[RMDB]
RNA sequence: GGGAACGACUCGAGUAGAGUCGAAAAUGUCACACAGUAGCGAGGGAUGCAAUUAAUUGCAUCUACACCAACCUCAAGGCUUGGAUUUCGACUAGUGUCGAGUCGUUCCCACUCGCUACGCCCACAACGUAAAGCUUGGUUUCGACCAAGCUUUACGAAAAGAAACAACAACAACAAC
Reactivity to DMS in 0.01 (KOAc 150mM, MgCl2 10mM, bicine 150mM(pH8.5), 24C), signal-to-noise 2, nucleotides 027 to 126: u000g050u000c200a140c160a190c110a140g000u000a000g010c020g020a010g010g010g020a020u000g000c010a000a040u020u010a070a080u000u000g000c040a020u000c000u010a070c120a200c030c040a020a040c030c000u020c270a150a210g010g010c290u000u000g020g000a220u000u000u030c010g000a000c000u000a040g010u010g010u000c000g000a020g000u000c030g010u000u000c000c000c000a040c010u000c030g030c000u000a030c000g000c080c030c030a110c110a060a130